[RMDB]
RNA sequence: GGGAACGACUCGAGUAGAGUCGAAAAAUGCCAUUCCGUCUAUAACAUCUUCAGCAGGUAUCCAUUUAAUGUCAGCAUGAGUACGUUCAGUGACAAGGAGCUCACUAUUUCACAAGUCAGUCUAAUUUACAGAUAUUCAUCUUUGACCAUUGGAAAAAUACCUUUCGGUCUUCGGACCGAAAGGUAUAAAAGAAACAACAACAACAAC
Reactivity to 2A3 in 0.01 (KOAc 150mM, MgCl2 10mM, bicine 150mM(pH8.5), 24C), signal-to-noise 1, nucleotides 027 to 156: a000u080g080c050c000a020u090u020c010c000g030u050c060u060a150u010a130a100c020a140u060c020u080u120c070a000g040c010a000g150g000u040a080u010c030c010a080u050u150u070a230a050u190g020u040c000a000g060c020a070u090g040a000g050u080a030c030g070u090u080c010a000g000u000g080a030c020a030a120g110g000a020g000c000u000c010a010c000u030a110u050u100u080c130a100c030a160a060g070u100c000a020g000u000c030u060a000a170u110u130u110a080c020a000g040a000u000a030u150u090c020a010u000c060u220u110u100g030a050c090c050a000u000u210g170g000a110a050a180a020

Conditions: 150 mM KOAc, 10 mM MgCl2 and 150 mM bicine (pH 8.5), 24 C. The record gives the reactivity of an RNA of 207 nucleotides to 2A3. Reactivities are given for positions 27 through 156. Source: RMDB library OK3TST, as collected in RNAgym.